[RMDB]
RNA sequence: GGGAACGACUCGAGUAGAGUCGAAAAAUGUGCGGCAAAGAAACAUUGUUUAUGCAAAGGCACUUCGCAAUGUGUGCACAAACAUUGCUUAUUCAAACACGCUUCACAAUGUGCGACAAAGAAACAUAAAACGUUUAGUACUUCGGUACUAAACGAACUACGCAUUCAUCUUCGGAUGAAUGCGUAGAAAAGAAACAACAACAACAAC
Reactivity to DMS in 0.01 (KOAc 150mM, MgCl2 10mM, bicine 150mM(pH8.5), 24C), signal-to-noise 2, nucleotides 027 to 156: a150u000g060u000g030c010g040g010c170a090a090a080g000a090a050a030c000a000u000u010g010u000u000u000a010u000g020c000a050a060a160g000g010c000a030c020u010u020c240g030c100a030a060u020g010u000g060u010g080c050a010c020a020a020a020c030a020u010u000g010c010u000u000a090u000u000c070a220a100a030c020a060c000g020c080u000u000c090a120c000a020a140u000g020u010g000c030g000a190c050a060a090a080g000a160a170a070c040a070u000a030a110a080a130c020g000u010u000u000a000g000u010a010c000u000u000c210g040g060u000a010c010u000a000a010a020c000g020a010a050
Reactivity to 2A3 in 0.01 (KOAc 150mM, MgCl2 10mM, bicine 150mM(pH8.5), 24C), signal-to-noise 4, nucleotides 027 to 156: a000u080g000u040g060c040g030g030c050a090a070a000g090a090a160a040c030a040u080u060g040u060u130u060a140u150g020c050a070a060a060g140g000c020a020c000u100u060c040g030c010a010a010u020g000u000g030u090g010c050a000c030a100a040a000c020a000u000u010g010c000u070u060a100u100u110c070a030a070a050c090a020c120g040c000u060u080c050a010c020a050a080u060g010u030g020c020g060a020c050a020a160a030g110a070a110a000c020a050u160a080a030a030a020c010g010u000u000u000a000g000u000a000c000u000u020c260g050g000u000a000c000u000a000a000a000c000g000a010a000
Overview
The data come from the RNA Mapping Database (RMDB), library M2RFPK. Structure probing data (DMS and 2A3) for a 207-nucleotide construct. The 2A3 profile rests on 3,006 reads. For 2A3 the reverse transcriptase was SuperScript II with manganese. Values cover nucleotides 27 to 156.